[RMDB]
RNA sequence: GGGAACGACUCGAGUAGAGUCGAAAAUGAAAGUAGUCUCCUGCAGCGUCUGGGGUUUCCGUUGCAGUCCUCGGAACCACGACCUCGGCGUGGCCUAGCGAGUUAUGGCGACGAAGGCCGUGAAAAACGAUCUUUUACGGUUCGCCGUAAAAGAUCGAAAAGAAACAACAACAACAAC
Reactivity to 2A3 in 0.01 (KOAc 150mM, MgCl2 10mM, bicine 150mM(pH8.5), 24C), signal-to-noise 1, nucleotides 027 to 126: u140g060a010a030a020g090u110a040g040u050c030u010c010c000u040g040c060a020g060c000g000u000c070u200g040g000g000g030u010u030u000c000c000g000u010u030g000c020a020g090u120c010c010u040c040g020g060a030a030c040c000a010c050g030a050c000c020u060c070g120g000c030g040u050g040g030c010c000u030a050g030c030g100a020g020u110u070a070u140g060g000c020g020a040c050g000a080a030g050g030c000c030g000u040g020a080a040a000a000a000
Reactivity to DMS in 0.01 (KOAc 150mM, MgCl2 10mM, bicine 150mM(pH8.5), 24C), signal-to-noise 2, nucleotides 027 to 126: u000g030a130a080a050g030u000a060g000u010c060u000c020c030u000g010c100a080g010c050g030u010c040u030g000g000g010g000u000u000u020c040c040g010u000u000g030c080a060g000u000c080c020u000c060g000g010a080a140c100c030a040c010g000a050c010c020u000c050g010g020c000g040u000g010g000c000c020u000a200g000c100g010a110g030u000u000a090u010g000g000c030g040a080c060g010a100a070g000g020c000c010g010u010g000a020a060a020a080a110